[RMDB]
RNA sequence: GGGAACGACUCGAGUAGAGUCGAAAAAGAAAGAGCGUAUUCGCGUCUUGACGUGAAUGAGCCUAGACUGUAGGCUCUAGUGGGAUAGUAACGCUCACUCCCAAAACGCUAUUCCACACUCAGUUAAGAUGGGUGAUGGAUUCGUCCAUCACCCAUCAAAAGAAACAACAACAACAAC
Reactivity to 2A3 in 0.01 (KOAc 150mM, MgCl2 10mM, bicine 150mM(pH8.5), 24C), signal-to-noise 2, nucleotides 027 to 126: a020g080a030a050a010g020a000g000c000g000u040a060u020u050c000g010c020g030u000c070u130u180g110a020c010g010u000g050a060a080u080g000a010g050c000c000u060a120g080a300c140u120g150u160a000g010g030c010u000c000u000a010g000u000g000g000g000a000u000a000g010u020a060a020c020g030c000u000c020a030c020u010c020c000c000a040a030a000a020c070g000c000u000a010u000u030c000c010a000c000a000c010u150c020a110g040u080u130a190a020
Reactivity to DMS in 0.01 (KOAc 150mM, MgCl2 10mM, bicine 150mM(pH8.5), 24C), signal-to-noise 2, nucleotides 027 to 126: a110g000a130a070a090g010a000g010c020g020u000a180u010u000c010g030c000g000u000c090u000u010g010a010c030g050u000g000a020a020u000g000a020g000c010c020u000a040g010a090c150u020g000u000a000g010g000c000u000c020u000a020g000u010g000g000g010a050u010a020g010u000a130a150c000g000c030u000c000a130c260u000c020c020c000a040a080a100a040c210g000c000u000a000u000u000c000c000a000c020a110c270u000c070a050g000u000u000a060a120